Source: RMDB library M2PK50, as collected in RNAgym.
The record gives the reactivity of an RNA of 177 nucleotides to 2A3 and DMS.
For DMS, 2,074 sequencing reads were counted.
The reactions ran in a buffer of 150 mM KOAc, 10 mM MgCl2 and 150 mM bicine (pH 8.5), at 24 C.
RNA sequence: GGGAACGACUCGAGUAGAGUCGAAAAGUUUCAUCCUUCGGGAUGAAACAAAUAAAGUGACGCUCGCGCGUCACUGGCAUCGAGUAGGUCGUGCCGCCUACAAAAUCGACGGGUUCGCCCGUCGAAAGACUACCUUGAAGUUCGCUUCAAGGUAGUCAAAAGAAACAACAACAACAAC
Reactivity to 2A3 in 0.01 (KOAc 150mM, MgCl2 10mM, bicine 150mM(pH8.5), 24C), signal-to-noise 3, nucleotides 027 to 126: g000u010u000u000c000a020u000c000c010u010u100c270g160g010g020a000u000g000a000a000a010c000a000a010a010u130a020a110a010g000u000g000a000c000g000c030u080c130g180c090g000c040g070u010c000a000c000u010g020g030c020a150u160c150g020a050g040u050a020g030g090u080c070g170u110g010c030c020g020c000c000u010a030c010a020a060a000a150u020c000g000a000c010g040g000g020u030u040c180g050c040c000c000g000u000c000g010a000a000a000
Reactivity to DMS in 0.01 (KOAc 150mM, MgCl2 10mM, bicine 150mM(pH8.5), 24C), signal-to-noise 3, nucleotides 027 to 126: g010u000u000u000c000a000u000c000c000u000u020c160g010g010g000a000u000g000a000a020a000c000a050a070a070u000a040a060a020g000u000g000a020c000g020c000u010c300g020c300g000c000g010u000c000a010c010u000g010g030c110a070u000c140g000a120g000u000a040g010g020u000c050g010u000g000c020c020g000c020c010u000a020c050a050a050a070a120u010c000g000a020c000g030g000g030u000u010c270g030c010c020c000g000u010c000g010a010a030a080

For DMS the reverse transcriptase was MarathonRT.